An RNA of 177 nucleotides, treated with 2A3 and DMS and read out base by base. DMS adducts were read by reverse transcription with MarathonRT. For DMS, 6,433 sequencing reads were counted. The 2A3 profile rests on 7,616 reads. The data come from the RNA Mapping Database (RMDB), library TTRDEL. The reactions ran in a buffer of 150 mM KOAc, 10 mM MgCl2 and 150 mM bicine (pH 8.5), at 24 C.
RNA sequence: GGGAACGACUCGAGUAGAGUCGAAAAGAUAUGGAGCGAGCUAGCGAUAGGGUCGGAAACGACCCGAAAUCGCUUGGACCUCGCCUCCUAAGUCAAAGUUUAGCUGUCGUUCGCGACAGCUAAACAACUUCGUUUAAUUGUUCGCAAUUAAACGAAGAAAAGAAACAACAACAACAAC
Reactivity to 2A3 in 0.01 (KOAc 150mM, MgCl2 10mM, bicine 150mM(pH8.5), 24C), signal-to-noise 2, nucleotides 027 to 126: g020a010u070a050u140g010g000a010g000c000g000a000g020c020u020a000g010c010g000a010u030a120g000g010g000u010c020g000g000a180a070a020c010g000a010c000c080c000g010a000a000a020u000c010g000c000u030u050g020g060a060c030c010u010c000g050c060c020u000c000c000u030a100a040g030u040c080a180a020a100g000u000u010u000a010g020c010u010g000u000c010g040u060u110c300g000c000g150a010c000a000g010c000u000a000a000a010c000a000a000
Reactivity to DMS in 0.01 (KOAc 150mM, MgCl2 10mM, bicine 150mM(pH8.5), 24C), signal-to-noise 5, nucleotides 027 to 126: g000a030u000a300u000g000g000a020g010c010g000a010g020c020u000a020g010c000g010a010u000a270g010g000g020u000c000g010g000a080a100a200c000g010a000c000c000c000g000a020a090a080u000c000g010c000u010u010g040g000a130c300c010u000c000g010c130c030u000c000c000u000a070a140g000u010c040a080a130a130g000u000u000u000a000g010c000u000g000u000c000g010u000u010c210g010c010g010a010c010a000g000c000u000a000a000a000c010a110a120